[RMDB]
Structure probing data (2A3 and DMS) for a 177-nucleotide construct. For DMS, 3,706 sequencing reads were counted.
RNA sequence: GGGAACGACUCGAGUAGAGUCGAAAAACAUAGUUUGGCCGACGUCAUACCAUUGAAGACGAAUCGUUAAAGACACCAGCUCGUCUUAUAGGAGCCCAUUUAGCAAAAACAGUCCUGUACGAACCAAUAUUAGUGCUACAUUCGUGUAGCACUAAUAAAAAGAAACAACAACAACAAC
Reactivity to 2A3 in 0.01 (KOAc 150mM, MgCl2 10mM, bicine 150mM(pH8.5), 24C), signal-to-noise 1, nucleotides 027 to 126: a000c040a040u170a060g080u030u070u040g050g000c020c000g070a030c020g040u030c010a040u050a140c060c000a040u020u140g030a070a030g010a000c040g000a020a060u040c030g010u060u090a080a140a040g070a040c010a040c060c010a020g040c050u010c020g080u040c040u050u100a130u110a110g050g050a020g020c000c000c040a020u050u070u010a070g000c040a000a040a040a080a000c030a000g060u030c000c000u060g000u060a030c040g020a050a030c030c040a080a000
Reactivity to DMS in 0.01 (KOAc 150mM, MgCl2 10mM, bicine 150mM(pH8.5), 24C), signal-to-noise 4, nucleotides 027 to 126: a060c070a090u000a110g010u000u010u000g010g020c040c030g010a080c070g000u010c060a060u000a100c080c070a100u010u010g010a070a080g010a030c040g000a050a070u010c100g010u000u010a050a060a090g000a060c080a060c070c080a080g010c080u000c030g000u000c030u000u000a080u000a080g010g000a090g010c040c020c050a060u000u010u000a060g000c070a050a030a060a050a080c100a080g010u000c010c020u000g010u010a040c050g000a070a100c070c060a040a110

The RNA was probed in 150 mM KOAc, 10 mM MgCl2 and 150 mM bicine (pH 8.5) at 24 C. It was measured as part of the RMDB library M2PK90.